[RMDB]
Source: RMDB library TTRDES, as collected in RNAgym. Chemical mapping of a 177-nucleotide RNA with 2A3 and DMS. 2A3 adducts were read by reverse transcription with SuperScript II with manganese. The RNA was probed in 150 mM KOAc, 10 mM MgCl2 and 150 mM bicine (pH 8.5) at 24 C.
RNA sequence: GGGAACGACUCGAGUAGAGUCGAAAAGAUAUGGACGUUGAUUCAGCAUCGAUCGUAACUCGGAAACGAGUUACGGGAGCUGGUCGGGCGUCCUAAGUCAAAAUCCAUGGGCUUCGGCCCAUGGAAAGUACCGUGAUAUCUUCGGAUAUCACGGUACAAAAGAAACAACAACAACAAC
Reactivity to 2A3 in 0.01 (KOAc 150mM, MgCl2 10mM, bicine 150mM(pH8.5), 24C), signal-to-noise 2, nucleotides 027 to 126: g010a000u020a000u020g010g010a010c020g020u020u070g060a110u300u300c080a000g000c000a040u300c110g030a000u010c000g010u010a000a010c010u000c000g020g000a000a000a010c010g000a000g010u000u010a000c020g000g000g000a000g010c000u000g000g000u000c010g010g170g000c010g020u000c000c000u000a010a000g000u000c000a010a020a040a300u030c000c010a010u000g020g000g030c020u110u150c300g120g000c020c000c010a010u000g000g000a020a040a000
Reactivity to DMS in 0.01 (KOAc 150mM, MgCl2 10mM, bicine 150mM(pH8.5), 24C), signal-to-noise 1, nucleotides 027 to 126: g000a020u000a010u020g010g000a000c000g050u000u000g000a020u020u020c000a000g050c000a300u000c230g010a010u040c000g000u000a000a000c000u000c000g000g010a010a010a040c000g000a050g000u010u010a000c010g000g000g000a010g080c000u000g000g020u000c000g000g000g000c010g040u010c000c000u030a000a060g010u020c010a100a120a200a170u000c000c000a000u000g000g010g030c000u010u020c300g050g000c000c000c010a010u010g000g000a000a020a080
Description:
For DMS, 1,710 sequencing reads were counted. For 2A3, 4,315 sequencing reads were counted.